Structure probing data (2A3) for a 177-nucleotide construct. The 2A3 profile rests on 808 reads. Reactivities are given for positions 27 through 126.
[RMDB]
RNA sequence: GGGAACGACUCGAGUAGAGUCGAAAACAUCGCCAAUCCUGCCAACUGCAGCGGGGAGCUGGAAGCAAUCCAGCGAGUCGACGACAUGCAGAGCCUUUCUGGAAGUGGCGAGAACUCCCCGAGGGACGCGCGUAGCUACGUUCGCGUAGCUACGCGCAAAAGAAACAACAACAACAAC
Reactivity to 2A3 in 0.01 (KOAc 150mM, MgCl2 10mM, bicine 150mM(pH8.5), 24C), signal-to-noise 2, nucleotides 027 to 126: c090a140u000c000g000c010c000a000a020u020c000c000u010g060c090c010a100a040c030u020g000c020a040g010c000g070g050g020g000a050g040c000u000g000g010a120a090g120c080a070a270u010c000c000a000g000c010g000a020g070u140c050g010a090c080g000a040c080a230u010g000c000a030g010a010g040c000c070u230u300u130c110u100g000g020a130a090g170u000g040g000c010g000a000g000a010a010c010u040c020c000c000c000g020a090g070g070g030a000c050